[RMDB]
An RNA of 177 nucleotides, treated with DMS and 2A3 and read out base by base. The RNA was probed in 150 mM KOAc, 10 mM MgCl2 and 150 mM bicine (pH 8.5) at 24 C. As a SHAPE reagent, 2A3 marks flexible, mostly unpaired nucleotides at the ribose 2'-OH. Values cover nucleotides 27 to 126. The data come from the RNA Mapping Database (RMDB), library OK2TST.

RNA sequence: GGGAACGACUCGAGUAGAGUCGAAAACUACGGAUCGGACAUCAUAGCCUUCGUCGAUGACACGUUCACGUACGAUCGGCGGCGUGUCGAGGAGAUCUGUCGGCUCAUCGUGGAAAGCGGUCUAGACCAGAUGAGUGUCAUUCGUGACACUCAUCUGAAAAGAAACAACAACAACAAC
Reactivity to DMS in 0.01 (KOAc 150mM, MgCl2 10mM, bicine 150mM(pH8.5), 24C), signal-to-noise 4, nucleotides 027 to 126: c090u000a140c060g010g010a040u000c020g010g000a040c020a030u000c120a100u000a300g000c020c000u010u000c030g010u000c010g010a220u000g010a010c040a080c160g000u010u000c050a060c020g020u020a030c080g000a050u010c190g020g010c020g000g000c130g000u000g000u000c010g020a120g030g000a220g000a020u000c030u000g020u000c050g020g030c030u000c060a050u010c050g000u000g020g000a060a060a120g020c060g020g000u000c030u000a090g020a190c160
Reactivity to 2A3 in 0.01 (KOAc 150mM, MgCl2 10mM, bicine 150mM(pH8.5), 24C), signal-to-noise 4, nucleotides 027 to 126: c030u050a020c020g040g000a030u020c020g030g040a020c010a030u140c010a100u130a080g020c010c000u020u030c030g040u000c010g160a300u090g000a020c020a020c200g080u170u120c050a030c050g060u160a030c070g090a140u130c060g010g000c000g000g010c050g010u040g020u010c020g000a090g090g050a130g000a020u000c040u060g040u000c010g030g000c000u000c020a050u030c050g010u040g030g100a160a030a050g110c030g000g000u010c020u070a060g060a080c040